[RMDB]
RNA sequence: GGGAACGACUCGAGUAGAGUCGAAAAGAUAUGGAAGAGAUCACGAUAGUCCACACAAGCGCGAAACUAUGACAUCGGAAACGAUGUAUAGGAGCUUGGUGGACUAUCGUGAUCUCUUCCUAAGUCAUCAAGGCAUUCAGUUCGCUGAAUGCCUUGAAAAAGAAACAACAACAACAAC
Reactivity to DMS in 0.01 (KOAc 150mM, MgCl2 10mM, bicine 150mM(pH8.5), 24C), signal-to-noise 1, nucleotides 027 to 126: g000a010u010a300u010g020g000a020a000g000a000g020a000u000c000a000c000g010a020u000a000g010u000c000c000a010c000a150c000a000a020g020c000g020c260g040a180a120a280c000u000a000u000g000a020c020a000u000c000g000g000a170a040a300c020g020a020u000g000u020a010u000a000g020g020a110g010c010u000u000g020g000u000g000g000a010c010u000a010u000c000g010u000g000a000u000c000u000c000u000u000c000c000u000a010a080g020u020c050a210
Conditions: 150 mM KOAc, 10 mM MgCl2 and 150 mM bicine (pH 8.5), 24 C.
The record gives the reactivity of an RNA of 177 nucleotides to DMS.
DMS (dimethyl sulfate) methylates the pairing face of unpaired adenines and cytosines.
DMS adducts were read by reverse transcription with MarathonRT.
For DMS, 1,729 sequencing reads were counted.